[RMDB]
RNA sequence: GGGAACGACUCGAGUAGAGUCGAAAACAUCUUUGUUCGCAAAGAUGAAAAAAGAUAUGGACACACCUAGGACGAUAAGCUGCAUUCGGAAACGAAUGGCAGCUUUUGACGUCCUGGUGUGUCCUAAGUCAAAAACCUGAAACUUCGGUUUCAGGAACAUAUUCCGUAUCUUCGGAUACGGAAUAUGAAAAGAAACAACAACAACAAC
Reactivity to 2A3 in 0.01 (KOAc 150mM, MgCl2 10mM, bicine 150mM(pH8.5), 24C), signal-to-noise 1, nucleotides 027 to 156: c000a000u000c000u020u000u020g030u070u080c140g050c110a020a040a000g010a010u050g050a210a060a020a000a000a020g020a010u060a010u070g000g000a000c000a000c010a010c010c080u090a030g000g000a030c080g140a110u030a230a000g010c000u010g000c000a000u000u010c020g020g020a050a000a040c000g010a000a020u000g070g050c000a000g000c000u000u000u020u030g000a000c030g000u010c000c020u000g000g000u000g000u000g000u010c000c000u010a020a020g010u000c000a000a000a030a230a300c000c000u000g010a000a020a020c040u010u130c180g150g000u000u000u030c000a000g010g010a010a000
Reactivity to DMS in 0.01 (KOAc 150mM, MgCl2 10mM, bicine 150mM(pH8.5), 24C), signal-to-noise 3, nucleotides 027 to 156: c010a010u000c010u000u010u000g010u000u020c300g060c030a000a030a010g010a020u000g010a000a030a060a120a120a120g000a080u000a300u000g010g020a070c000a020c000a000c000c000u010a030g040g000a040c000g030a150u000a020a020g020c000u000g010c000a060u000u010c000g030g020a210a090a180c010g010a030a000u000g020g010c000a010g020c010u000u000u000u000g010a200c040g020u000c000c010u000g010g000u010g020u000g010u000c000c000u000a000a050g020u010c030a080a060a080a110a130c020c000u000g010a010a010a010c000u000u000c300g040g000u000u000u010c000a010g010g000a030a050